[RMDB]
RNA sequence: GGGAACGACUCGAGUAGAGUCGAAAAUGCUGACCGGCUACAUAGACGCCACGCCGAUCAGCUACGAGGCGGGGCAGGUGACGGUAUCGGUCAACGGCCGCAGCAAGACCGCCGACCUGGUGGACUGCACCGUUCACUUUUUCGAAAGUGAACGGUGAAAAGAAACAACAACAACAAC
Reactivity to 2A3 in 0.01 (KOAc 150mM, MgCl2 10mM, bicine 150mM(pH8.5), 24C), signal-to-noise 2, nucleotides 027 to 126: u060g000c010u000g000a030c020c020g020g000c030u060a050c070a110u290a090g110a100c080g040c060c030a040c050g000c030c000g040a090u030c040a010g020c000u000a000c070g050a000g030g000c020g010g000g020g030c060a050g010g070u040g040a080c030g000g050u150a210u200c040g000g000u060c070a070a040c060g040g050c010c000g000c000a010g000c000a050a000g150a070c000c010g000c000c020g040a180c000c000u000g060g030u040g020g030a040c060u070g010
Reactivity to DMS in 0.01 (KOAc 150mM, MgCl2 10mM, bicine 150mM(pH8.5), 24C), signal-to-noise 3, nucleotides 027 to 126: u030g030c030u000g000a050c060c010g020g010c060u000a130c130a080u020a120g020a160c100g000c060c030a040c160g000c000c000g000a070u000c050a080g000c060u000a010c120g020a140g010g000c000g000g010g000g010c050a070g000g020u010g010a110c060g020g020u000a050u000c040g000g010u000c050a100a130c070g010g000c010c020g020c100a050g000c020a080a140g050a110c010c030g000c020c000g000a100c080c060u000g000g010u000g000g000a140c080u000g000